[RMDB]
RNA sequence: GGGAACGACUCGAGUAGAGUCGAAAAAGAUACCGUUUAACCCUUCUAAACAGACGAAUUAUAUGCUGGCAUCUUUAUUACUGUCCAUGCAAACUAUGUCAGGGUACGGGCGAGCUUGGGUUAAGAACUAGGUUAUUGCCUUCGGGCAAUAACCUAGAAAAGAAACAACAACAACAAC
Reactivity to 2A3 in 0.01 (KOAc 150mM, MgCl2 10mM, bicine 150mM(pH8.5), 24C), signal-to-noise 2, nucleotides 027 to 126: a010g150a040u100a050c010c020g030u000u050u010a100a050c050c010c000u070u000c090u150a160a300a250c050a020g210a010c040g050a040a060u220u000a020u030a000u210g010c000u020g060g000c010a010u000c000u010u160u100a180u100u230a130c100u070g090u070c010c040a030u160g020c000a000a040a050c030u070a020u130g030u010c030a000g090g030g000u040a010c000g040g000g000c000g040a020g010c010u050u030g080g070g010u050u050a020a000g080a090a070
Reactivity to DMS in 0.01 (KOAc 150mM, MgCl2 10mM, bicine 150mM(pH8.5), 24C), signal-to-noise 1, nucleotides 027 to 126: a000g060a160u030a160c000c000g050u040u000u080a110a010c020c000c000u000u000c180u000a190a200a100c260a070g000a120c060g000a230a050u000u010a100u000a230u000g020c000u000g000g030c010a010u000c190u040u030u000a150u040u000a000c140u000g030u000c000c000a000u050g000c040a030a000a150c170u040a110u010g000u050c010a000g000g010g030u040a020c240g000g000g000c070g000a020g000c050u000u000g000g000g000u000u000a000a010g000a050a120
The record gives the reactivity of an RNA of 177 nucleotides to 2A3 and DMS. For 2A3, 883 sequencing reads were counted. Conditions: 150 mM KOAc, 10 mM MgCl2 and 150 mM bicine (pH 8.5), 24 C. DMS adducts were read by reverse transcription with MarathonRT.